This 207-nucleotide RNA was probed chemically with 2A3. The RNA was probed in 150 mM KOAc, 10 mM MgCl2 and 150 mM bicine (pH 8.5) at 24 C. Values cover nucleotides 27 to 156.
RNA sequence: GGGAACGACUCGAGUAGAGUCGAAAAUACUUGAACUCUCUGAACCUUGAUUUCAUAAUCUGUAAAAUGGGGACAGUGACAAUGAUAAUACCUAUCUUGCAGGAUGUUUGUGAGAUUCACACUAUUAUACUUACCAUACAUAGCAUAGGGCCUAGAACGGUGACGUAUGAUUCGUCAUACGUCACCGAAAAGAAACAACAACAACAAC
Reactivity to 2A3 in 0.01 (KOAc 150mM, MgCl2 10mM, bicine 150mM(pH8.5), 24C), signal-to-noise 2, nucleotides 027 to 156: u110a010c090u000u070g020a100a000c020u030c000u000c020u070g030a030a040c000c000u010u100g060a050u050u080u000c000a000u090a230a100u080c010u040g070u120a000a070a050a080u080g000g000g040g010a030c000a020g000u000g070a010c100a070a150u080g060a010u040a080a100u060a150c000c030u020a020u100c030u020u090g000c020a010g080g060a100u090g050u030u180u020g110u030g010a040g000a020u120u120c020a000c020a000c130u060a120u170u050a150u070a070c050u080u030a010c020c030a030u020a110c060a020u150a000g030c010a040u050a010g050g000g040c020c000u050a030g030a170a020